[RMDB]
Record summary:
Chemical mapping of a 177-nucleotide RNA with DMS and 2A3. The reactions ran in a buffer of 150 mM KOAc, 10 mM MgCl2 and 150 mM bicine (pH 8.5), at 24 C. For DMS the reverse transcriptase was MarathonRT. The DMS profile rests on 15,423 reads.
RNA sequence: GGGAACGACUCGAGUAGAGUCGAAAAGUUCUUGAACGGACUAGGUGGUCCACACCGGUGUUUCGGACAGCGGUUCGAUUCCGCUCAGCUCCAUUCUCCCUUCGGGGCUGCAAUGGUUUCGACGGGGCACUUAAUAAGGGUUCGCCCUUAUUAAGUGAAAAGAAACAACAACAACAAC
Reactivity to DMS in 0.01 (KOAc 150mM, MgCl2 10mM, bicine 150mM(pH8.5), 24C), signal-to-noise 9, nucleotides 027 to 126: g000u000u000c030u000u000g010a080a160c150g010g010a030c020u000a110g010g020u000g010g010u010c080c090a140c150a050c020c020g010g020u000g010u000u000u010c100g010g010a090c060a040g010c030g010g000u000u000c080g000a300u000u000c010c010g010c030u000c050a030g000c040u000c010c010a120u010u000c060u000c010c010c030u000u000c130g010g000g000g010c030u000g000c230a050a040u000g000g010u000u000u000c010g010a060c110g010g000g010g010
Reactivity to 2A3 in 0.01 (KOAc 150mM, MgCl2 10mM, bicine 150mM(pH8.5), 24C), signal-to-noise 5, nucleotides 027 to 126: g000u060u000c020u090u160g060a080a030c070g010g050a010c020u050a110g130g020u050g010g030u080c070c020a040c020a000c030c020g080g050u090g030u040u110u140c080g060g040a020c010a030g060c020g060g000u040u050c020g010a030u060u000c000c010g000c020u000c010a010g010c020u010c010c010a040u150u020c060u080c050c010c010u030u060c050g000g000g010g000c000u010g000c030a060a120u140g020g000u010u030u050c010g000a010c030g010g000g010g000